An RNA of 207 nucleotides, treated with DMS and 2A3 and read out base by base.
RNA sequence: GGGAACGACUCGAGUAGAGUCGAAAAACGGUCCUCUGAUCCAUUCUUUUGAUCAGAGAGAAGAUGAAGAGUGUCAAGUAAAUAAUGGCACGUGACUCGGACGAAGUAUCCACGUGCGUCCUCUCCCCACACCCAUGUGGCCCAUAGGAUAUAUGAACCGAGUGAGUAAUUUCGAUUACUCACUCGGAAAAGAAACAACAACAACAAC
Reactivity to DMS in 0.01 (KOAc 150mM, MgCl2 10mM, bicine 150mM(pH8.5), 24C), signal-to-noise 1, nucleotides 027 to 156: a150c080g000g020u010c020c000u000c000u000g020a000u010c010c140a200u010u000c120u000u050u010u000g030a020u000c010a030g080a100g010a100g040a000a060g000a100u010g000a130a130g020a070g010u020g020u000c000a070a110g010u000a100a100a170u010a130a140u010g010g010c000a010c000g010u000g010a140c040u000c040g000g000a120c030g000a100a230g030u000a110u010c000c000a070c010g000u010g000c030g000u000c010c040u000c050u000c030c000c000c020a130c050a060c080c030c050a090u000g020u010g020g000c000c040c040a160u000a060g010g010a060u010a090u000a110u020g020a060a300
Reactivity to 2A3 in 0.01 (KOAc 150mM, MgCl2 10mM, bicine 150mM(pH8.5), 24C), signal-to-noise 2, nucleotides 027 to 156: a000c070g000g060u040c000c010u040c000u000g000a000u000c010c060a070u110u260c140u100u230u050u150g000a000u000c000a000g000a000g000a000g000a000a010g110a050u110g090a080a050g040a000g030u070g010u040c060a060a060g050u190a080a140a070u180a030a050u120g030g000c000a000c020g000u000g020a050c020u020c050g050g090a050c040g070a130a020g060u080a070u080c080c010a000c010g010u030g010c010g050u030c000c010u000c010u020c020c000c030c000a000c000a000c010c000c000a070u100g040u040g040g020c000c010c030a060u070a100g000g010a100u270a030u240a000u300g040a000a030
For DMS the reverse transcriptase was MarathonRT. It was measured as part of the RMDB library OK3TST.